[RMDB]
RNA sequence: GGGAACGACUCGAGUAGAGUCGAAAAAUAGGGUCAGUAUUGGUAGGACCUACACCCGUCAACGUAAUUGGAAGAGGCUUGAUGACUCGGAUGGGCUGUACUUUAAAUUUUCCAAUUAGUCCUAUUACAAUUUAUGAGGGUUCGCCCUCAUAAAUUGAAAAGAAACAACAACAACAAC
Reactivity to 2A3 in 0.01 (KOAc 150mM, MgCl2 10mM, bicine 150mM(pH8.5), 24C), signal-to-noise 2, nucleotides 027 to 126: a000u040a040g000g000g030u060c010a100g100u080a070u100u000g010g060u070a020g010g020a010c000c000u010a000c010a010c010c040c000g010u040c030a060a120c050g060u130a110a060u080u100g060g000a060a030g000a040g030g000c050u040u100g100a080u120g020a240c020u010c070g000g050a040u030g020g020g010c140u040g010u020a040c040u120u210u110a030a160a150u150u110u060u060c010c000a040a010u010u010a050g000u000c020c000u010a010u020u070a080
Reactivity to DMS in 0.01 (KOAc 150mM, MgCl2 10mM, bicine 150mM(pH8.5), 24C), signal-to-noise 3, nucleotides 027 to 126: a060u000a050g010g010g000u000c040a060g020u010a070u010u000g020g000u000a060g000g000a120c110c090u010a040c090a070c000c010c010g030u000c060a090a100c090g030u010a050a120u010u020g020g000a100a120g020a040g020g000c080u010u000g010a120u000g000a050c030u010c040g010g020a040u000g000g000g010c270u000g010u000a030c140u000u000u000a050a070a200u020u010u000u000c000c000a020a050u000u000a160g000u000c010c010u000a030u000u000a160
Chemical mapping of a 177-nucleotide RNA with 2A3 and DMS. The DMS profile rests on 2,059 reads. Conditions: 150 mM KOAc, 10 mM MgCl2 and 150 mM bicine (pH 8.5), 24 C. Reactivities are given for positions 27 through 126. DMS (dimethyl sulfate) methylates the pairing face of unpaired adenines and cytosines. The data come from the RNA Mapping Database (RMDB), library RFMREP.